[RMDB]
RNA sequence: GGGAACGACUCGAGUAGAGUCGAAAAGAACGCGUCGAAGCCGCAGCGCGACAUGUAGAGGAGCUGGUCGCGCAGCACGUCGCCGAUCGCGCGCAGCUCGCCCUUCCAGCCGUGGCGCUCGCGCAGACCGAGUCAGUAUCUUCGGAUACUGACUCGGAAAAGAAACAACAACAACAAC
Reactivity to DMS in 0.01 (KOAc 150mM, MgCl2 10mM, bicine 150mM(pH8.5), 24C), signal-to-noise 2, nucleotides 027 to 126: g000a130a050c260g000c050g000u000c030g000a060a160g000c100c050g000c080a050g030c040g020c030g000a040c070a120u000g000u000a160g000a130g010g000a050g010c010u000g000g030u000c010g000c000g040c020a040g000c020a100c200g000u020c030g050c100c110g000a050u000c070g020c000g000c000g000c080a080g020c050u010c080g000c000c020c020u000u000c050c050a140g040c080c040g010u010g020g040c000g030c060u000c000g010c030g010c050a080g000a170
Reactivity to 2A3 in 0.01 (KOAc 150mM, MgCl2 10mM, bicine 150mM(pH8.5), 24C), signal-to-noise 2, nucleotides 027 to 126: g050a070a010c040g000c020g040u120c080g090a100a000g040c050c060g000c030a060g020c000g030c020g050a070c030a100u260g040u130a040g050a100g150g040a030g060c020u070g110g110u100c010g000c010g030c040a020g040c000a010c030g200u130c050g000c020c010g050a070u100c040g020c000g000c040g010c000a010g000c020u010c050g140c010c000c000u010u050c020c020a050g020c040c020g040u070g020g010c000g040c040u040c020g000c020g000c010a010g000a030